RNA sequence: GGGAACGACUCGAGUAGAGUCGAAAAGAUAUGGAGCCUGACCCAGCGGCUUGGUACCCUAUGAAGUAAUGAUCUCGGAAACGAGAUCAUUAUGGAGGGUACCGAAAUCGCUGCAGGCUCCUAAGUCCAUGAAUACACGGUUCGCCGUGUAUUCAUGAAAAGAAACAACAACAACAAC
Reactivity to 2A3 in 0.01 (KOAc 150mM, MgCl2 10mM, bicine 150mM(pH8.5), 24C), signal-to-noise 2, nucleotides 027 to 126: g050a020u170a090u240g020g020a000g030c020c000u040g070a230c170c000c050a020g020c010g000g010c000u060u140g000g010u020a000c000c000c000u300a300u300g080a050a020g000u000a000a000u000g000a010u020c010u010c020g020g040a070a080a110c000g000a000g000a000u010c000a010u010u000a000u010g000g020a000g010g000g020u000a000c000c000g000a000a010a000u240c000g000c020u010g000c000a000g010g010c010u000c010c010u000a000a000g000u000c020
Reactivity to DMS in 0.01 (KOAc 150mM, MgCl2 10mM, bicine 150mM(pH8.5), 24C), signal-to-noise 3, nucleotides 027 to 126: g010a090u010a300u000g000g000a030g000c000c010u010g020a270c210c300c100a020g020c000g040g020c180u000u030g000g010u000a000c010c000c000u000a300u010g010a130a170g000u000a000a010u010g000a020u000c000u000c000g010g000a130a140a230c000g000a020g010a000u000c000a000u000u000a000u000g000g000a010g010g000g000u000a000c010c000g000a010a070a040u010c020g040c010u000g000c010a000g010g000c000u000c000c000u000a000a050g000u010c050

Structure probing data (2A3 and DMS) for a 177-nucleotide construct.
2A3 adducts were read by reverse transcription with SuperScript II with manganese.
For 2A3, 3,508 sequencing reads were counted.